[RMDB]
The record gives the reactivity of an RNA of 177 nucleotides to DMS and 2A3. The reactions ran in a buffer of 150 mM KOAc, 10 mM MgCl2 and 150 mM bicine (pH 8.5), at 24 C.
RNA sequence: GGGAACGACUCGAGUAGAGUCGAAAAACUUAUGGGAGAUUAGUUACCUCUCAGCCCCUCCACCUUGGGGUGCCCUAUUCGGAGCACUGCAGUUCCCGAUAGAAAGGCUAAGCACGUCGCAUUGACGCCUUACAAUGUUCUUCGGAACAUUGUAAGGAAAAGAAACAACAACAACAAC
Reactivity to DMS in 0.01 (KOAc 150mM, MgCl2 10mM, bicine 150mM(pH8.5), 24C), signal-to-noise 3, nucleotides 027 to 126: a080c080u020u010a090u010g010g000g010a020g000a080u000u000a110g010u010u000a130c140c000u000c000u000c030a040g000c010c000c000c010u000c090c050a130c090c060u000u010g010g000g020g020u000g000c000c010c010u000a130u010u000c200g010g010a080g030c020a050c080u010g000c080a140g000u000u000c050c010c000g000a060u000a050g000a090a070a080g010g000c040u000a040a090g000c090a190c050g010u000c040g010c180a140u010u010g010a050c060g000
Reactivity to 2A3 in 0.01 (KOAc 150mM, MgCl2 10mM, bicine 150mM(pH8.5), 24C), signal-to-noise 2, nucleotides 027 to 126: a010c100u140u090a080u060g000g000g010a020g050a060u030u020a110g120u070u130a050c010c000u000c000u000c000a030g030c010c000c000c000u010c030c060a160c020c000u040u070g000g040g000g000u000g010c010c000c000u030a130u030u060c040g010g000a060g020c030a020c180u230g000c030a090g000u040u000c000c000c020g000a010u010a040g070a020a050a000g030g000c020u020a060a030g050c060a030c060g020u020c010g000c150a120u010u200g000a000c030g040
The DMS profile rests on 2,689 reads. DMS (dimethyl sulfate) methylates the pairing face of unpaired adenines and cytosines. For DMS the reverse transcriptase was MarathonRT.